[RMDB]
RNA sequence: GGGAACGACUCGAGUAGAGUCGAAAAGAUAUGGAAUGACACUUCGAUAAGCGAUACAUCGGAAACGAUGUGUCGCUUUUGACGAAGAUGUCAUUCCUAAGUCAAAAGGUAAGCUUCGGCUUACCAACAUAUUAGGCGUCUUCGGACGCCUAAUAUGAAAAGAAACAACAACAACAAC
Reactivity to 2A3 in 0.01 (KOAc 150mM, MgCl2 10mM, bicine 150mM(pH8.5), 24C), signal-to-noise 1, nucleotides 027 to 126: g020a040u080a040u150g030g020a000a000u000g000a000c010a000c050u020u010c020g090a120u000a160a000g000c020g040a010u000a030c010a000u030c000g040g000a070a110a040c000g020a000u000g000u000g000u000c020g030c010u040u020u010u010g000a010c010g000a000a000g010a010u020g000u000c010a000u000u000c000c000u000a030a020g020u020c040a020a020a040a140g010g000u010a010a000g000c000u050u190c300g110g000c010u030u030a000c000c000a000a000
Reactivity to DMS in 0.01 (KOAc 150mM, MgCl2 10mM, bicine 150mM(pH8.5), 24C), signal-to-noise 5, nucleotides 027 to 126: g000a020u010a300u010g000g000a010a000u000g010a010c000a020c000u000u000c010g020a160u000a020a000g010c000g000a000u000a000c000a000u000c000g030g000a140a110a180c000g020a010u000g000u000g010u000c000g010c000u000u000u000u000g010a230c290g010a020a000g010a100u000g010u000c010a000u000u000c000c010u000a000a110g010u000c030a100a080a140a140g010g020u000a000a000g000c000u000u010c280g040g020c000u010u000a010c000c010a080a080